RNA sequence: GGGAACGACUCGAGUAGAGUCGAAAAUCGUGCCAGAGGAAGUGGAGGCGGGGCUGUUCCUCCAAUCGAAUCUCCUCAAUCACCCACAACUGAAGUACUCAGGAACUUCGUUUCCGACCUCCAUGUGAACAAGGGCAUGAUUCGUCAUGCCCUUGUUAAAAGAAACAACAACAACAAC
Reactivity to DMS in 0.01 (KOAc 150mM, MgCl2 10mM, bicine 150mM(pH8.5), 24C), signal-to-noise 3, nucleotides 027 to 126: u000c030g000u000g000c090c160a150g000a180g000g000a060a200g030u000g000g000a030g000g030c090g000g000g000g000c070u010g010u000u000c000c000u000c040c050a070a080u000c050g010a060a090u000c040u000c010c010u020c120a080a080u010c050a110c040c010c020a110c150a020a060c110u000g000a040a050g000u000a050c110u000c130a080g010g010a030a030c030u010u010c060g010u000u010u010c020c000g010a200c020c010u000c000c000a030u010g030u000g010
Reactivity to 2A3 in 0.01 (KOAc 150mM, MgCl2 10mM, bicine 150mM(pH8.5), 24C), signal-to-noise 1, nucleotides 027 to 126: u060c010g000u050g030c020c010a060g010a030g040g030a160a020g050u040g070g010a020g000g030c000g050g000g000g040c150u090g050u020u020c020c000u000c020c010a020a040u010c000g020a010a060u020c020u040c050c020u010c030a000a010u110c040a040c020c020c000a040c020a030a040c040u050g030a090a000g050u030a070c030u010c140a030g140g070a050a030c000u070u060c020g040u060u000u030c030c030g040a130c010c000u070c010c020a030u110g050u050g090
Background: The record gives the reactivity of an RNA of 177 nucleotides to DMS and 2A3. 2A3 adducts were read by reverse transcription with SuperScript II with manganese. For DMS, 2,040 sequencing reads were counted. Source: RMDB library OK2TST, as collected in RNAgym. The reactions ran in a buffer of 150 mM KOAc, 10 mM MgCl2 and 150 mM bicine (pH 8.5), at 24 C.